[RMDB]
RNA sequence: GGGAACGACUCGAGUAGAGUCGAAAAGAUAUGGACCAUACAGAGCGAUAAGCUGUGUGUCGGAAACGACACCAGCUUUUGACGCUCGUGUAUGGUCCUAAGUCAAAGAUGGCGUUCGCGCCAUCAAGGUCUUUUAAGAGUUCGCUCUUAAAAGACCAAAAGAAACAACAACAACAAC
Reactivity to 2A3 in 0.01 (KOAc 150mM, MgCl2 10mM, bicine 150mM(pH8.5), 24C), signal-to-noise 2, nucleotides 027 to 126: g000a010u070a060u140g000g000a000c000c010a000u010a000c000a000g020a010g000c010g050a070u020a110a020g010c030u040g220u020g000u020g010u210c000g050g050a080a070a040c010g010a000c000a000c020c020a000g020c010u020u000u020u040g050a010c030g000c000u010c000g010u010g000u020a010u000g000g020u010c000c000u000a000a020g000u000c010a030a040a060g000a000u000g000g020c010g010u060u070c300g010c010g010c170c000a010u010c010a000a020
Reactivity to DMS in 0.01 (KOAc 150mM, MgCl2 10mM, bicine 150mM(pH8.5), 24C), signal-to-noise 4, nucleotides 027 to 126: g010a050u000a300u010g000g010a010c000c000a020u000a000c000a180g000a010g010c000g010a160u000a040a020g000c010u000g000u020g030u000g000u010c000g020g000a130a100a220c010g020a020c000a000c000c020a000g000c000u000u000u000u010g020a190c070g000c000u000c000g020u000g010u000a010u000g010g000u000c000c000u000a000a080g020u000c040a110a120a150g000a010u000g020g020c000g010u000u020c250g030c010g010c000c000a000u000c000a070a100
Record summary
Source: RMDB library TTRDES, as collected in RNAgym. Structure probing data (2A3 and DMS) for a 177-nucleotide construct. The DMS profile rests on 4,876 reads. For 2A3 the reverse transcriptase was SuperScript II with manganese. For DMS the reverse transcriptase was MarathonRT. Conditions: 150 mM KOAc, 10 mM MgCl2 and 150 mM bicine (pH 8.5), 24 C.